Description: Source: RMDB library RNAMAK, as collected in RNAgym. An RNA of 207 nucleotides, treated with 2A3 and read out base by base. The reactions ran in a buffer of 150 mM KOAc, 10 mM MgCl2 and 150 mM bicine (pH 8.5), at 24 C.

RNA sequence: GGGAACGACUCGAGUAGAGUCGAAAAUCCUAAGUCAAGAAGACAUAGGCUUGGAUUUACGGACUUGAGCUAUCGGAAACGAUAGCAAUGAUGGUCCGUUGUCAGCCUAUGUACUUCUUGAUAUGGAAAAACCGGCGCUAGUUCGCUAGCGCCGGAAGGUCAUUAAAGACUUCGGUCUUUAAUGACCAAAAGAAACAACAACAACAAC
Reactivity to 2A3 in 0.01 (KOAc 150mM, MgCl2 10mM, bicine 150mM(pH8.5), 24C), signal-to-noise 1, nucleotides 027 to 156: u010c010c000u040a170a010g030u010c000a010a000g010a010a000g000a010c000a000u020a000g010g000c030u050u190g220g060a030u260u210u180a000c000g010g000a000c000u020u000g020a000g000c000u000a000u000c010g020g050a110a050a050c010g010a000u000a000g000c000a000a020u090g000a050u100g000g010u000c000c000g000u000u020g010u000c000a000g020c000c010u000a000u000g000u000a000c000u000u000c000u000u000g000a000u000a000u040g000g000a030a050a080a040a060c020c000g000g000c000g000c000u000a010g000u050u080c220g000c130u000a000g000c000g000c010c090g000g000a030a030

For 2A3 the reverse transcriptase was SuperScript II with manganese. Values cover nucleotides 27 to 156.